[RMDB]
RNA sequence: GGGAACGACUCGAGUAGAGUCGAAAAGAUAUGGAGCCAGGUGUACCAGCGAAGAACUAAAUCGGAAACGAUUUAGGGAGCUGACACUGGCUCCUAAGUCAAAGUGAUCCCGUUCGCGGGAUCACAAGAUUCUAAAAUACUUCGGUAUUUUAGAAUCAAAAGAAACAACAACAACAAC
Reactivity to 2A3 in 0.01 (KOAc 150mM, MgCl2 10mM, bicine 150mM(pH8.5), 24C), signal-to-noise 2, nucleotides 027 to 126: g000a020u040a020u130g010g010a000g000c010c030a110g120g120u110g070u190a300c280c020a010g000c030g270a300a020g000a040a000c000u000a000a000a000u000c010g000g030a050a020a030c010g000a000u000u010u010a000g030g000g000a000g000c010u060g090a020c020a010c080u000g000g020c000u010c000c000u000a000a000g010u000c010a010a020a020g000u010g000a020u000c010c020c000g000u040u030c240g010c000g080g010g000a000u000c000a010c000a000a010
Reactivity to DMS in 0.01 (KOAc 150mM, MgCl2 10mM, bicine 150mM(pH8.5), 24C), signal-to-noise 3, nucleotides 027 to 126: g000a030u010a300u010g010g010a000g000c000c010a010g020g020u010g030u010a180c300c070a020g000c000g010a120a170g030a130a200c000u000a000a000a000u000c000g010g000a100a050a160c010g000a000u000u010u000a000g010g000g000a030g020c010u000g020a020c060a040c020u000g000g010c000u010c000c000u000a000a060g000u000c030a090a110a170g010u020g000a010u000c000c000c000g020u000u020c200g030c040g010g000g000a000u000c010a000c010a050a070